This 177-nucleotide RNA was probed chemically with DMS and 2A3. Reactivities are given for positions 27 through 126.
RNA sequence: GGGAACGACUCGAGUAGAGUCGAAAAGUGGACGCUGCCUGGCCAGCGGCAGCCUGCUCUGCGCGUCAGGGACGGCGCCACCCGCGCCGUACGCGUUAUCUGGCGCGCCGGCCGGCGCGCAUCGCGACCAUACGAUAGGUUUCGACCUAUCGUAUGGAAAAGAAACAACAACAACAAC
Reactivity to DMS in 0.01 (KOAc 150mM, MgCl2 10mM, bicine 150mM(pH8.5), 24C), signal-to-noise 2, nucleotides 027 to 126: g010u000g010g020a090c050g020c030u000g000c040c030u000g030g030c050c020a200g010c020g000g020c010a120g010c010c040u000g050c020u010c030u000g000c000g020c010g000u010c230a140g000g000g020a040c010g000g000c010g000c020c080a130c260c150c080g000c020g000c000c040g000u000a040c050g000c050g000u010u000a020u020c030u000g000g000c120g090c000g060c090c300g000g010c020c070g040g040c070g090c110g010c110a030u000c020g010c050g000a240
Reactivity to 2A3 in 0.01 (KOAc 150mM, MgCl2 10mM, bicine 150mM(pH8.5), 24C), signal-to-noise 1, nucleotides 027 to 126: g030u030g030g040a030c020g020c080u170g030c040c100u150g010g030c020c000a020g030c010g040g050c020a010g000c000c000u000g000c010u030c040u040g000c000g000c010g040u050c090a140g120g140g090a030c000g000g000c010g000c000c020a170c040c050c000g000c000g000c010c020g060u070a030c030g020c010g040u070u110a080u160c030u030g010g000c010g000c030g000c000c000g020g000c040c000g000g020c030g000c040g000c010a040u010c010g000c010g030a030